[RMDB]
RNA sequence: GGGAACGACUCGAGUAGAGUCGAAAAGUACAUGGCAUGGGCGCGUGCCAACCCUGGCCCGCAUGUGCCACGCAUCCACCACCUCAAGCGGCACGGUCAGUACGUAGUGGCUGUGCUGGAUCAGUUGCAGGAAAUGAACUACGAUGCGCGGUGUGAGCGCACUUGGGCAAUUCGUUGCCCAAGUGCGAAAAGAAACAACAACAACAAC
Reactivity to 2A3 in 0.01 (KOAc 150mM, MgCl2 10mM, bicine 150mM(pH8.5), 24C), signal-to-noise 1, nucleotides 027 to 156: g090u050a070c020a100u090g010g000c050a010u000g020g010g010c110g020c070g060u200g040c000c000a160a300c040c000c000u010g020g020c000c000c000g000c020a030u000g010u040g060c030c000a010c080g040c000a000u030c060c020a020c050c020a010c010c000u010c040a020a060g040c000g020g030c000a000c000g020g010u020c010a010g040u120a080c190g040u200a030g170u060g070g000c000u000g000u000g090c010u040g000g010a070u120c090a060g090u000u060g000c100a000g000g030a010a090a090u170g010a010a050c090u060a030c180g000a000u000g000c000g000c000g000g000u070g000u080g100a040g040